[RMDB]
RNA sequence: GGGAACGACUCGAGUAGAGUCGAAAAGUGAUAUGGAGCAAGGUUCUUGGCCUCUGUUCAGUUUUCUUAUCUGUAGAGAGGACGUAAUCAUGGUGGUUUGUCUAAGGAUCUGAUUAUGUGAUUUAUGAAUACGAGGACUCUUCGGAGUCCUCGUAUUAAAAGAAACAACAACAACAAC
Reactivity to DMS in 0.01 (KOAc 150mM, MgCl2 10mM, bicine 150mM(pH8.5), 24C), signal-to-noise 1, nucleotides 027 to 126: g010u000g010a070u000a060u000g010g010a040g020c050a080a050g000g010u010u000c050u000u000g010g010c080c020u000c010u010g000u000u000c020a040g010u000u010u000u010c110u000u010a070u000c030u010g010u000a040g010a080g000a040g010g000a050c060g010u000a040a060u010c040a050u000g030g000u000g020g010u000u000u010g000u010c070u030a120a110g000g000a040u000c030u000g000a070u010u000a060u010g010u000g010a140u000u000u010a060u020g000

Chemical mapping of a 177-nucleotide RNA with DMS.
In probing experiments dimethyl sulfate is read out at A N1 and C N3, which are open when not base-paired.
It was measured as part of the RMDB library OK2TST.
Values cover nucleotides 27 to 126.
For DMS the reverse transcriptase was MarathonRT.